Overview
This 177-nucleotide RNA was probed chemically with DMS and 2A3. DMS adducts were read by reverse transcription with MarathonRT. The RNA was probed in 150 mM KOAc, 10 mM MgCl2 and 150 mM bicine (pH 8.5) at 24 C. It was measured as part of the RMDB library OK1LIB.
[RMDB]
RNA sequence: GGGAACGACUCGAGUAGAGUCGAAAAGCGUAAGGCGGCCACAGCAGAAGCCUUCACGUCGAAGCCGCUGUCAGAUUCUGGUGAAUCUGCGAUUUCUGCUGAAAUGAAGGCUGAAGAGACAGCCAAAAGCCUGCUAUCGAUUCGUCGAUAGCAGGCUAAAAGAAACAACAACAACAAC
Reactivity to DMS in 0.01 (KOAc 150mM, MgCl2 10mM, bicine 150mM(pH8.5), 24C), signal-to-noise 1, nucleotides 027 to 126: g020c030g000u040a090a070g030g010c010g000g000c000c130a020c040a090g000c000a010g010a110a130g010c050c000u000u010c010a000c010g000u010c020g030a010a220g020c200c010g000c240u030g020u020c000a020g000a030u000u000c000u000g000g000u030g000a000a020u000c090u010g040c000g000a200u000u030u010c000u060g030c000u000g000a230a090a030u020g010a040a010g060g000c000u000g000a200a020g010a300g030a090c000a070g050c030c000a000a120a140
Reactivity to 2A3 in 0.01 (KOAc 150mM, MgCl2 10mM, bicine 150mM(pH8.5), 24C), signal-to-noise 2, nucleotides 027 to 126: g000c000g100u140a000a070g020g000c000g010g020c030c050a140c000a010g000c040a000g000a030a000g000c020c000u060u030c110a020c010g200u140c050g140a070a000g040c000c010g040c260u230g040u100c020a020g000a000u000u020c020u170g230g000u300g040a020a040u000c000u000g000c000g010a000u060u080u030c000u000g000c000u010g000a030a000a060u080g040a040a060g000g000c000u000g030a140a000g050a000g000a020c000a000g030c000c000a030a170a000